[RMDB]
RNA sequence: GGGAACGACUCGAGUAGAGUCGAAAACACUUAACCUCAACGCUGCAGUUGGCGCCUUAUACACAGGAAAGAAGAAAGAUUAUUUCAAGGAUUUUUCAAAUGAGGACAAAUCGGAAAUUAUCAUGAGAGAUGUUGAGUUAUUCGUAACUCAACAUCUAAAAGAAACAACAACAACAAC
Reactivity to DMS in 0.01 (KOAc 150mM, MgCl2 10mM, bicine 150mM(pH8.5), 24C), signal-to-noise 4, nucleotides 027 to 126: c090a170c110u010u050a070a070c050c030u010c090a070a080c070g010c060u020g000c100a070g020u000u000g010g010c090g000c030c000u000u030a070u020a090c180a100c120a070g010g020a050a060a090g020a120a110g000a100a100a100g000a020u000u000a020u000u010u000c020a130a060g000g000a000u000u000u010u000u000c000a030a080a070u030g020a100g000g010a030c100a020a020a040u010c020g000g000a030a020a010u010u010a020u000c020a090u010g010a130g010
Reactivity to 2A3 in 0.01 (KOAc 150mM, MgCl2 10mM, bicine 150mM(pH8.5), 24C), signal-to-noise 6, nucleotides 027 to 126: c090a000c020u120u130a090a090c000c020u050c040a030a030c030g030c050u090g070c050a130g010u080u070g020g020c020g010c010c020u110u100a120u090a100c080a000c040a080g120g090a100a080a050g140a060a040g080a090a110a000g020a010u030u030a000u010u060u010c040a070a060g260g000a020u000u000u020u000u000c060a150a150a180u300g070a150g120g080a010c040a010a010a000u010c010g030g040a000a020a010u070u080a020u040c020a050u150g070a010g010